[RMDB]
RNA sequence: GGGAACGACUCGAGUAGAGUCGAAAAAAACUUUUGUGACUUGCUGAAACGGGACUAAACUCCUCACCGAGGCUAAGCAAGUAAAAUACGCCUCUCAUAUCCUUACCUGAGGGUGGUAAGGAAAUAACCUGCAACGCUUCCUUCGGGAAGCGUUGAACGAGCAUUAGUGAUUCGUCACUAAUGCUCGAAAAGAAACAACAACAACAAC
Reactivity to 2A3 in 0.01 (KOAc 150mM, MgCl2 10mM, bicine 150mM(pH8.5), 24C), signal-to-noise 2, nucleotides 027 to 156: a000a000a000c120u150u060u040u150g090u030g100a060c000u020u040g050c000u050g030a060a040a050c030g010g000g000a000c040u170a180a020a010c010u020c010c010u040c020a090c020c070g010a010g010g010c040u030a020a020g010c010a040a040g030u110a010a060a000a010u110a020c000g000c010c000u010c000u020c020a070u050a050u250c010c000u000u000a010c000c000u040g080a070g010g080g040u030g010g000u020a000a000g000g020a000a030a000u010a000a010c010c070u090g000c030a000a000c000g010c010u000u000c000c000u000u030c090g050g000g000a000a000g000c000g000u000u000g000a000a000